[RMDB]
RNA sequence: GGGAACGACUCGAGUAGAGUCGAAAAGAUAUGGACUAAGAGGAACGACGAACCGGGAGUAUCGCUCUCGGAAACGAGAGCGAUACAUCGAUCGGUUCGUCGUUCUACCCACCUUAGUCCUAAGUCAGGUAUUUAUCAGGUUCGCCUGAUAAAUACCAAAAGAAACAACAACAACAAC
Reactivity to DMS in 0.01 (KOAc 150mM, MgCl2 10mM, bicine 150mM(pH8.5), 24C), signal-to-noise 1, nucleotides 027 to 126: g000a160u000a300u000g000g000a040c010u010a000a030g030a210g010g020a010a020c030g000a020c000g000a020a010c000c010g000g000g000a040g020u000a000u000c000g030c000u010c000u000c010g040g000a000a020a080c010g010a010g040a090g010c000g000a000u010a000c000a140u000c160g010a130u010c010g020g010u000u000c010g010u000c010g000u000u000c000u040a010c120c090c100a300c110c000u000u010a000g000u000c020c020u010a060a060g000u010c110a090